[RMDB]
RNA sequence: GGGAACGACUCGAGUAGAGUCGAAAAGUACAUCUCUAGAUACAUGCAUGACAUGCACGAGUCUAGGCUAGGUACAGUCACAUGUCAGUGGAUCCUAGAGACAUGGCUAGGUCUCCAUGUGCUAGCGGCCAAAACAGAGUUUCGACUCUGUUUUGGCAAAAGAAACAACAACAACAAC
Reactivity to 2A3 in 0.01 (KOAc 150mM, MgCl2 10mM, bicine 150mM(pH8.5), 24C), signal-to-noise 3, nucleotides 027 to 126: g000u000a030c020a070u050c040u000c010u080a000g010a020u050a070c050a020u030g060c020a050u050g130a190c040a120u020g020c010a030c070g070a100g070u030c030u030a010g060g000c050u100a060g070g040u080a040c020a050g060u040c040a020c000a030u080g050u080c030a030g080u060g070g060a050u080c010c000u000a000g010a010g040a040c070a140u140g140g000c000u020a010g000g040u000c020u030c030c020a010u060g050u040g050c020u020a040g030c040g070
Reactivity to DMS in 0.01 (KOAc 150mM, MgCl2 10mM, bicine 150mM(pH8.5), 24C), signal-to-noise 4, nucleotides 027 to 126: g020u010a040c050a070u020c030u010c000u000a020g010a050u010a130c150a040u000g010c030a080u010g040a090c120a300u010g010c060a070c090g010a300g040u000c030u010a010g000g020c110u000a040g000g010u010a050c080a030g020u010c060a090c030a010u040g000u000c050a210g000u020g000g010a080u010c080c020u000a010g000a070g010a070c150a080u000g010g010c010u000a020g000g010u000c040u000c010c040a080u000g020u010g010c050u000a070g010c100g040
The data come from the RNA Mapping Database (RMDB), library OK2TRN.
Chemical mapping of a 177-nucleotide RNA with 2A3 and DMS.
The RNA was probed in 150 mM KOAc, 10 mM MgCl2 and 150 mM bicine (pH 8.5) at 24 C.
For DMS the reverse transcriptase was MarathonRT.
For 2A3, 2,958 sequencing reads were counted.